An RNA of 207 nucleotides, treated with DMS and 2A3 and read out base by base. For DMS, 9,270 sequencing reads were counted. It was measured as part of the RMDB library OK3TST.

RNA sequence: GGGAACGACUCGAGUAGAGUCGAAAAUCGCUAAUCUGUAAUAUUAGAUGAUUGGCACACGUGAAAGAGAAUUUGCCAGUUCGCACUCGAGCCUCAUCCUUCGGGGUGGACAUGGCAGCCCCCGUCUAUGUGGGAGGUUUUUUGGUGCGCUACGACGAACUAGUAGGGAAUUCGUUCCCUACUAGUUAAAAGAAACAACAACAACAAC
Reactivity to DMS in 0.01 (KOAc 150mM, MgCl2 10mM, bicine 150mM(pH8.5), 24C), signal-to-noise 4, nucleotides 027 to 156: u000c090g030c020u000a020a020u000c050u010g020u000a190a140u010a160u000u000a120g020a130u010g000a030u000u000g000g040c020a120c060a070c070g030u010g000a100a060a100g010a100g030a070a100u000u000u000g010c000c000a110g010u010u000c020g040c000a120c020u010c190g000a040g010c040c030u010c110a090u000c020c020u000u000c070g030g010g010g050u000g010g010a040c030a100u000g010g020c040a110g010c000c010c010c000c010g000u000c110u000a100u000g020u000g010g010g000a100g030g000u010u000u010u000u000u010g020g010u000g030c020g020c050u000a050c040g000a100c110g010
Reactivity to 2A3 in 0.01 (KOAc 150mM, MgCl2 10mM, bicine 150mM(pH8.5), 24C), signal-to-noise 5, nucleotides 027 to 156: u090c020g000c010u000a020a000u020c020u050g150u180a050a130u120a270u300u150a090g060a160u110g000a010u030u030g000g020c020a010c000a000c050g090u080g140a070a100a020g120a020g030a040a100u090u090u100g050c020c010a020g010u020u010c000g000c030a150c040u050c030g000a010g020c040c030u100c060a140u110c020c010u060u050c010g010g000g010g000u040g020g010a020c110a140u080g050g000c000a010g000c000c000c010c000c010g030u050c090u120a150u160g060u090g010g020g050a090g030g000u050u020u010u020u160u160g030g000u020g010c010g000c070u060a020c020g080a010c000g000